[RMDB]
RNA sequence: GGGAACGACUCGAGUAGAGUCGAAAAAGGUCGAGUGGGCUGCUGUGGCUUGAUCCCUCAACGCGGUCGCGGACGUAACGCAGCGCCGAAAAAUCCUCGAUCGCAAAUCCGACGCUGUCGAAAAGCGACCGCACGGAGUAUUCGUACUCCGUGCGGUAAAAGAAACAACAACAACAAC
Reactivity to 2A3 in 0.01 (KOAc 150mM, MgCl2 10mM, bicine 150mM(pH8.5), 24C), signal-to-noise 3, nucleotides 027 to 126: a000g040g000u030c020g000a030g020u120g000g100g020c030u080g010c000u020g010u020g040g060c030u010u040g060a080u060c000c030c000u110c120a100a170c130g010c060g010g050u100c060g000c020g000g040a070c100g060u220a190a000c040g030c040a010g010c030g070c010c000g140a160a080a020a010a010u060c020c010u030c030g020a030u010c000g020c000a140a140a020u030c010c000g000a000c010g030c030u030g060u110c050g070a110a070a000a000g010c030g000
Reactivity to DMS in 0.01 (KOAc 150mM, MgCl2 10mM, bicine 150mM(pH8.5), 24C), signal-to-noise 1, nucleotides 027 to 126: a020g020g010u000c000g000a010g000u000g000g000g000c010u000g040c100u000g000u070g000g000c020u020u000g000a070u000c010c040c040u070c100a050a070c090g000c080g080g010u000c010g070c010g000g010a180c020g000u010a030a110c100g020c000a090g020c010g020c000c000g000a000a210a090a040a070u000c050c010u000c040g000a040u010c040g000c250a000a060a140u010c030c010g000a210c040g030c010u020g000u030c110g010a060a080a100a170g000c000g000
Record summary
Structure probing data (2A3 and DMS) for a 177-nucleotide construct. The data come from the RNA Mapping Database (RMDB), library OK1LIB. Values cover nucleotides 27 to 126. Conditions: 150 mM KOAc, 10 mM MgCl2 and 150 mM bicine (pH 8.5), 24 C.